[RMDB]
RNA sequence: GGGAACGACUCGAGUAGAGUCGAAAAGAGUAAAUAGAGGAGUCAGGGUUCGCACCCGCUCCGCGAACCUAGGGUAACACUGACUGUGGAGCGGAAGAGAGAGCAGACGAAGAUACGUCUGCAUAGAAUUAGCGCGUAUAUUCGUAUACGCGCUAAUAAAAGAAACAACAACAACAAC
Reactivity to 2A3 in 0.01 (KOAc 150mM, MgCl2 10mM, bicine 150mM(pH8.5), 24C), signal-to-noise 3, nucleotides 027 to 126: g090a010g040u180a020a080a080u270a050g090a080g120g040a040g030u070c060a050g020g040g000u010u000c000g000c000a080c040c010c000g000c010u010c000c010g000c010g000a010a010c000c020u050a050g130g050g020u040a060a010c050a010c110u070g070a030c020u060g060u120g100g010a000g000c010g010g010a090a020g040a000g000a000g010a000g000c000a010g000a000c010g040a180a030g070a180u180a100c020g000u000c000u000g000c000a000u040a010g010a010
Reactivity to DMS in 0.01 (KOAc 150mM, MgCl2 10mM, bicine 150mM(pH8.5), 24C), signal-to-noise 3, nucleotides 027 to 126: g010a150g020u010a030a060a090u040a070g010a060g000g000a030g020u010c020a080g000g000g010u000u000c000g020c050a110c130c000c020g030c010u020c010c020g050c010g000a020a020c010c010u010a120g000g020g010u040a070a060c170a110c140u010g030a030c070u030g020u020g020g000a010g010c000g000g010a100a100g000a110g000a100g010a150g000c000a000g000a010c000g000a140a100g010a120u070a090c010g010u000c000u000g000c000a020u020a030g000a140
An RNA of 177 nucleotides, treated with 2A3 and DMS and read out base by base.
For 2A3, 3,366 sequencing reads were counted.
The DMS profile rests on 5,654 reads.
The RNA was probed in 150 mM KOAc, 10 mM MgCl2 and 150 mM bicine (pH 8.5) at 24 C.
DMS adducts were read by reverse transcription with MarathonRT.